[RMDB]
RNA sequence: GGGAACGACUCGAGUAGAGUCGAAAAGAUAUGGACCAGGGUAGAGCCGAGGAUCUUUAUCGGAAACGAUAAAGGGAGGCUAUACCUGGUCCUAAGUCAAACCGAGUUUUCUUCGGAAAACUCGGAACCUAGAUGUAAGCUUCGGCUUACAUCUAGGAAAAGAAACAACAACAACAAC
Reactivity to 2A3 in 0.01 (KOAc 150mM, MgCl2 10mM, bicine 150mM(pH8.5), 24C), signal-to-noise 2, nucleotides 027 to 126: g010a020u050a040u110g000g010a010c010c020a040g120g000g120u300a300g040a040g200c020c020g050a300g020g020a010u000c000u010u010u000a010u000c010g020g010a060a030a020c010g010a000u020a000a000a000g000g000g000a000g000g000c030u020a020u050a020c000c000u010g010g000u020c000c000u010a010a000g020u010c020a040a030a120c000c000g000a000g000u010u010u010u020c020u040u040c060g150g000a000a010a010a010c010u000c000g010g010a000a010
Reactivity to DMS in 0.01 (KOAc 150mM, MgCl2 10mM, bicine 150mM(pH8.5), 24C), signal-to-noise 2, nucleotides 027 to 126: g000a060u000a300u010g000g000a010c010c000a030g000g020g010u000a050g000a140g010c000c010g000a060g020g010a010u000c000u000u000u000a000u000c000g000g000a150a060a170c010g000a010u010a000a030a000g010g000g000a010g000g030c010u000a080u000a040c000c000u000g010g000u000c000c000u010a000a050g010u010c030a090a120a240c010c000g000a030g000u000u000u000u000c010u000u010c280g000g000a000a000a000a000c000u000c010g010g010a010a040